An RNA of 177 nucleotides, treated with DMS and 2A3 and read out base by base. Reactivities are given for positions 27 through 126. It was measured as part of the RMDB library OK1LIB. 2A3 adducts were read by reverse transcription with SuperScript II with manganese.

RNA sequence: GGGAACGACUCGAGUAGAGUCGAAAACGUAGGCGAACAUGCCAUCAAAGUGCAGGGGAUCGAAGCUGAGGCCCACGGUUACGACCGUCGUGUAUAUAACCACGCGGUAUUGGCCCCACGUGGUCACCAUCAUUCACAACUUCGGUUGUGAAUGAUGAAAAGAAACAACAACAACAAC
Reactivity to DMS in 0.01 (KOAc 150mM, MgCl2 10mM, bicine 150mM(pH8.5), 24C), signal-to-noise 6, nucleotides 027 to 126: c080g050u020a100g000g010c030g000a080a150c130a100u030g010c040c030a070u030c160a090a100a140g010u020g020c050a080g000g000g000g000a040u020c020g020a090a120g010c050u010g000a120g000g000c010c000c030a070c090g030g000u010u020a080c100g000a050c010c000g000u040c040g010u000g000u000a110u050a120u030a140a100c230c000a010c010g000c000g000g020u010a040u020u020g010g000c060c020c030c060a110c090g010u020g000g000u010c090a080c120
Reactivity to 2A3 in 0.01 (KOAc 150mM, MgCl2 10mM, bicine 150mM(pH8.5), 24C), signal-to-noise 8, nucleotides 027 to 126: c070g040u060a040g030g020c030g030a090a040c100a100u240g020c020c010a030u130c070a040a150a070g060u110g050c050a040g030g030g010g040a050u070c020g030a090a040g030c070u050g020a050g020g050c010c020c000a020c020g030g000u070u100a070c100g030a020c010c000g170u290c030g030u040g010u000a110u020a050u040a190a040c030c010a000c000g020c000g000g000u040a130u050u110g040g010c020c000c000c000a100c080g030u130g000g020u030c020a020c040
Conditions: 150 mM KOAc, 10 mM MgCl2 and 150 mM bicine (pH 8.5), 24 C. For DMS the reverse transcriptase was MarathonRT.